RNA sequence: GGGAACGACUCGAGUAGAGUCGAAAACAGGAAUUCACUGCACCUAGCCUGAUCCAUUGACCUGGGCCCAGUAUAGGCCCUCCCAUGUUGGGAGGCCAUGGGGUGUUAAGGUUAAUGCUGGGCCACAAUAAUCUAGCCUUUUCGAAGGCUAGAUUAUAAAAGAAACAACAACAACAAC
Reactivity to DMS in 0.01 (KOAc 150mM, MgCl2 10mM, bicine 150mM(pH8.5), 24C), signal-to-noise 4, nucleotides 027 to 126: c040a030g010g010a130a110u010u010c080a110c060u010g010c060a120c030c020u000a110g000c020c010u020g010a090u010c130c020a050u010u000g000a070c060c030u000g020g000g010c010c010c000a050g000u000a070u010a150g000g000c110c020c040u000c000c000c000a130u000g010u000u010g030g000g010a020g010g010c060c010a050u000g000g010g000g030u000g020u000u010a110a090g000g000u000u000a040a030u000g010c060u000g000g000g010c010c070a050c100a070
Reactivity to 2A3 in 0.01 (KOAc 150mM, MgCl2 10mM, bicine 150mM(pH8.5), 24C), signal-to-noise 3, nucleotides 027 to 126: c010a010g030g100a030a080u270u120c050a040c110u050g000c060a050c020c010u010a030g030c000c010u050g020a080u030c030c020a030u020u100g080a060c010c020u040g000g050g000c000c010c000a020g030u030a050u060a120g050g000c060c020c010u000c020c000c000a070u200g150u190u170g090g010g010a020g010g000c010c000a010u020g030g020g000g000u050g060u100u110a080a020g000g020u020u070a030a000u020g040c010u030g000g020g030c000c010a020c010a010